Description: Chemical mapping of a 177-nucleotide RNA with DMS and 2A3. For 2A3, 1,367 sequencing reads were counted. For DMS the reverse transcriptase was MarathonRT. The reactions ran in a buffer of 150 mM KOAc, 10 mM MgCl2 and 150 mM bicine (pH 8.5), at 24 C.
RNA sequence: GGGAACGACUCGAGUAGAGUCGAAAAUGCAGGUCCAGGCCCAGGUGCAGUCACAGACUCAGCCGCGGAUACCAUCCACAGACACCCAGGUGCAGCCAAAGCUGCAGAAGCAGGCGCAAACACAGACGCUAUUCCAGGUGUUCGCACCUGGAAUAGCAAAAGAAACAACAACAACAAC
Reactivity to DMS in 0.01 (KOAc 150mM, MgCl2 10mM, bicine 150mM(pH8.5), 24C), signal-to-noise 1, nucleotides 027 to 126: u000g000c020a050g000g000u000c040c040a080g020g050c000c000c040a020g000g000u000g000c100a040g000u000c060a110c000a060g000a140c000u040c010a190g020c020c020g000c010g010g030a100u000a010c000c160a110u070c030c020a050c070a200g040a210c090a020c000c010c000a120g040g000u040g000c080a000g000c050c190a040a050a170g030c050u000g000c110a000g000a020a040g120c040a160g000g090c000g000c210a030a010a080c100a040c110a120g000a140c110
Reactivity to 2A3 in 0.01 (KOAc 150mM, MgCl2 10mM, bicine 150mM(pH8.5), 24C), signal-to-noise 2, nucleotides 027 to 126: u180g000c000a020g050g030u000c050c000a000g050g000c060c000c000a040g000g030u050g000c040a030g040u090c040a000c000a110g020a060c020u040c030a000g000c000c020g050c030g080g020a010u090a090c020c000a040u000c040c000a040c010a010g070a020c040a040c030c000c010a040g010g080u060g000c010a010g000c000c060a110a060a110g000c010u000g000c000a030g040a040a010g010c020a010g020g010c040g040c040a010a130a010c050a000c060a100g060a070c050